[RMDB]
RNA sequence: GGGAACGACUCGAGUAGAGUCGAAAAUAUUGAGUCAGCGAUCCCCGAGCUUCGCACCACAAAUGUUGCGGAUCAGGUGCUGGCUAGCGUGGGGUAUUACCAAAACUGGGAGUUAAGUGCGCAGGGCACGGUUUGGUUUAUUCGUAAACCAAACCGUAAAAGAAACAACAACAACAAC
Reactivity to DMS in 0.01 (KOAc 150mM, MgCl2 10mM, bicine 150mM(pH8.5), 24C), signal-to-noise 3, nucleotides 027 to 126: u030a090u000u010g010a100g010u000c050a030g040c030g010a120u020c040c010c010c030g020a120g020c090u000u010c300g020c010a000c030c020a140c270a080a130a120u010g000u000u000g020c020g010g000a070u000c090a090g010g020u000g030c000u000g010g030c000u000a040g020c090g030u010g010g010g020g010u000a030u000u010a150c040c050a070a040a070a110c150u020g000g020g000a050g000u000u000a080a090g020u010g030c060g000c020a130g000g000g010c100
Reactivity to 2A3 in 0.01 (KOAc 150mM, MgCl2 10mM, bicine 150mM(pH8.5), 24C), signal-to-noise 2, nucleotides 027 to 126: u210a050u040u120g020a030g020u050c000a000g030c000g070a140u080c040c000c000c030g020a020g000c040u140u120c080g000c000a010c030c000a070c070a060a250a110u230g020u090u060g070c040g060g010a050u050c030a030g000g040u080g010c010u010g020g040c020u040a050g030c020g050u090g000g030g020g000u040a070u050u140a070c050c030a020a000a040a090c040u050g000g050g030a060g060u090u130a090a020g050u060g040c040g000c030a020g070g020g000c030
Conditions: 150 mM KOAc, 10 mM MgCl2 and 150 mM bicine (pH 8.5), 24 C. The record gives the reactivity of an RNA of 177 nucleotides to DMS and 2A3. Values cover nucleotides 27 to 126. DMS adducts were read by reverse transcription with MarathonRT. The 2A3 profile rests on 1,316 reads. For DMS, 2,524 sequencing reads were counted. High 2A3 reactivity points to a flexible backbone, as in loops and unpaired stretches.